[RMDB]
RNA sequence: GGGAACGACUCGAGUAGAGUCGAAAAAUACACCAGCAGUAGGACUCAGCGACCGUCACAACAAGGUUGUGCUGGUAUCCGACGGUCGGAUAGCCCUGUCUUGCAGGUUGCCUUGCACUGACGUGCCACACCAUUUACAGAUUCGUCUGUAAAUGAAUCUAUAUUUGGGAUUCGUCCCAAAUAUAGAAAAAGAAACAACAACAACAAC
Reactivity to 2A3 in 0.01 (KOAc 150mM, MgCl2 10mM, bicine 150mM(pH8.5), 24C), signal-to-noise 5, nucleotides 027 to 156: a000u180a020c050a010c020c000a000g000c010a020g020u110a050g010g060a030c020u040c110a040g050c030g010a010c020c010g010u020c020a050c040a180a100c060a180a130g100g020u090u030g050u120g070c050u060g040g020u020a080u060c020c020g010a010c010g000g000u020c000g020g080a080u060a010g010c020c000c000u030g040u100c050u070u150g010c010a020g010g030u090u130g060c020c010u060u100g010c030a030c030u120g060a060c120g020u030g020c030c000a090c010a030c050c010a000u010u000u000a000c000a000g010a030u030u120c150g120u000c070u000g010u000a000a000a000u000g010a000a030
Reactivity to DMS in 0.01 (KOAc 150mM, MgCl2 10mM, bicine 150mM(pH8.5), 24C), signal-to-noise 3, nucleotides 027 to 156: a140u060a120c040a170c000c020a070g010c010a070g000u000a020g030g000a050c020u000c120a160g020c000g010a030c010c000g000u000c020a210c060a110a060c060a060a110g010g000u000u000g020u000g010c020u000g000g020u000a050u000c090c030g030a060c040g030g010u000c010g020g000a150u000a050g020c000c010c000u010g010u000c050u000u010g020c030a090g030g030u000u000g010c010c130u020u000g000c010a040c050u010g020a140c150g000u000g000c010c060a110c050a160c090c000a010u000u000u010a020c000a010g000a080u000u000c300g010u000c010u000g010u000a000a020a000u010g000a070a130